Chemical mapping of a 177-nucleotide RNA with DMS and 2A3.
2A3 is a SHAPE reagent: it acylates the 2'-hydroxyl of flexible nucleotides of all four kinds.
The RNA was probed in 150 mM KOAc, 10 mM MgCl2 and 150 mM bicine (pH 8.5) at 24 C.
[RMDB]
RNA sequence: GGGAACGACUCGAGUAGAGUCGAAAAGAUAUGGAAAGUGGAGCUUAACUUCCGUUGAAAUCGGAAACGAUGGAGGAAGUUGGAGCGUUGAAACUUUCCUAAGUCAAAAGCACAGUUCGCUGUGCAAUCAAUAAUCACAGUUCGCUGUGAUUAUUGAAAAAGAAACAACAACAACAAC
Reactivity to DMS in 0.01 (KOAc 150mM, MgCl2 10mM, bicine 150mM(pH8.5), 24C), signal-to-noise 8, nucleotides 027 to 126: g010a040u000a300u000g010g010a010a010a020g010u000g000g000a150g020c000u000u000a020a020c000u000u000c000c000g010u000u010g010a100a140a020u000c000g010g010a120a080a150c000g010a020u000g000g000a120g010g010a010a010g000u000u000g020g030a000g010c010g000u000u010g000a160a120a020c000u000u000u000c000c000u000a020a090g010u000c030a070a080a100a140g000c010a010c010a010g000u000u010c240g020c000u000g010u000g010c020a070a060
Reactivity to 2A3 in 0.01 (KOAc 150mM, MgCl2 10mM, bicine 150mM(pH8.5), 24C), signal-to-noise 4, nucleotides 027 to 126: g010a010u060a000u100g000g010a020a000a000g020u020g020g030a020g000c010u010u010a010a010c000u010u000c000c010g050u140u050g010a020a020a000u010c010g000g010a040a060a070c000g000a010u020g030g010a020g000g000a000a000g000u010u020g060g020a010g000c010g010u040u020g000a020a000a000c000u010u000u000c000c000u000a110a020g060u010c030a040a060a080a060g010c000a000c000a000g020u140u170c210g050c140u000g000u010g000c000a000a040